RNA sequence: GGGAACGACUCGAGUAGAGUCGAAAACGUGUCCGUCGGCGUAGCCGACAACAUGCCCAGGUAGCCCAGAUCUUCAAGGCUACGGUGCGUUGCGACGCACGGUCUGAUUCUUCACAACGACGUUCACAAGAUCGGAUCACUUUCGAGUGAUCCGAAAAGGUUAAAUAGGGUUCGCCCUAUUUAACCUAAAAGAAACAACAACAACAAC
Reactivity to 2A3 in 0.01 (KOAc 150mM, MgCl2 10mM, bicine 150mM(pH8.5), 24C), signal-to-noise 4, nucleotides 027 to 156: c030g010u020g000u050c100c070g010u000c000g030g000c260g130u150a090g030c000c010g010a010c000a000a000c000a010u090g040c000c000c010a020g000g040u010a010g010c020c060c150a060g000a110u040c020u000u070c060a020a050g000g000c000u000a000c020g010g010u010g000c000g000u000u090g060c210g130a010c010g020c000a000c010g010g010u000c010u030g060a130u160u030c060u140u160c080a080c040a220a130c110g080a030c060g080u120u150c070a060c010a160a070g030a160u030c000g000g000a000u000c000a010c010u050u070u010c020g000a000g010u000g000a000u000c000c000g000a000a000a000
Reactivity to DMS in 0.01 (KOAc 150mM, MgCl2 10mM, bicine 150mM(pH8.5), 24C), signal-to-noise 2, nucleotides 027 to 156: c050g030u000g030u000c060c080g010u000c000g000g030c000g020u000a130g010c020c010g010a040c000a030a010c050a020u010g000c010c020c010a160g040g010u010a020g020c000c000c100a140g010a140u010c140u000u000c100a110a160g010g040c000u000a020c050g000g000u000g000c040g000u000u000g010c150g000a110c020g010c030a050c000g020g010u000c080u010g000a210u010u000c090u010u000c050a080c060a080a130c050g010a080c020g020u000u000c020a090c070a050a140g000a150u010c000g000g000a020u000c000a010c010u000u010u000c270g030a020g020u000g000a010u000c010c000g010a000a010a070
The record gives the reactivity of an RNA of 207 nucleotides to 2A3 and DMS. For 2A3, 3,187 sequencing reads were counted. Source: RMDB library M2RFPK, as collected in RNAgym.